[RMDB]
RNA sequence: GGGAACGACUCGAGUAGAGUCGAAAACACCUCUGAGAGUGUCGGAGGACUGGCCCAGGCUGUUCUUGCAAAUGGGGAGCUCUGUUGCCUCCGGCCCCAGAAUGGGGGAAAAGUUCAGAGAGACCGAAUCUACGUUCACGUUCGCGUGAACGUAGAUAAAAGAAACAACAACAACAAC
Reactivity to 2A3 in 0.01 (KOAc 150mM, MgCl2 10mM, bicine 150mM(pH8.5), 24C), signal-to-noise 1, nucleotides 027 to 126: c030a080c030c020u020c020u010g100a130g040a040g140u090g000u020c010g020g010a010g030g000a020c060u180g120g020c100c000c000a010g030g000c000u110g070u300u190c100u200u270g020c050a130a180a300u130g000g000g000g000a050g040c050u020c020u200g060u080u040g050c000c000u000c010c000g000g000c060c020c000c000a070g090a300a250u300g080g000g000g000g000a050a030a000a110g020u040u010c000a000g000a020g000a020g000a000c000c050g040a020
Reactivity to DMS in 0.01 (KOAc 150mM, MgCl2 10mM, bicine 150mM(pH8.5), 24C), signal-to-noise 1, nucleotides 027 to 126: c140a140c020c000u010c010u000g010a040g020a070g000u010g010u000c000g020g010a000g000g010a040c040u010g030g000c040c040c020a050g010g010c150u000g000u000u020c110u000u010g010c120a030a120a230u020g000g020g010g020a110g010c020u020c060u000g040u000u000g000c020c010u000c020c050g000g010c010c000c020c020a150g040a130a120u000g000g000g030g000g020a040a090a080a060g000u010u000c020a020g000a040g000a140g000a280c030c000g020a060